[RMDB]
RNA sequence: GGGAACGACUCGAGUAGAGUCGAAAAUCGCUUUCAUUAAUAUACUUACAAAACCAGUAGACAACGUUUUGUGCUCAAUAACUGCUGAUAACUGAUUUAACAUAUCUGGCGUCAUUACAUUUGAAAAGACGCUGCAACGUUUCGACGUUGCAGCGUCAAAAGAAACAACAACAACAAC
Reactivity to 2A3 in 0.01 (KOAc 150mM, MgCl2 10mM, bicine 150mM(pH8.5), 24C), signal-to-noise 1, nucleotides 027 to 126: u060c000g040c050u210u140u030c160a090u080u100a300a170u000a000u050a040c000u000u040a110c030a030a090a000a030c050c050a150g000u150a050g110a000c000a040a000c050g000u000u000u300u000g000u000g000c000u000c040a020a020u150a300a090c000u000g000c060u090g020a070u180a210a000c050u090g040a000u050u050u050a120a120c130a050u000a000u150c000u000g030g060c000g000u000c000a000u040u040a020c020a130u000u100u100g000a150a000a000a000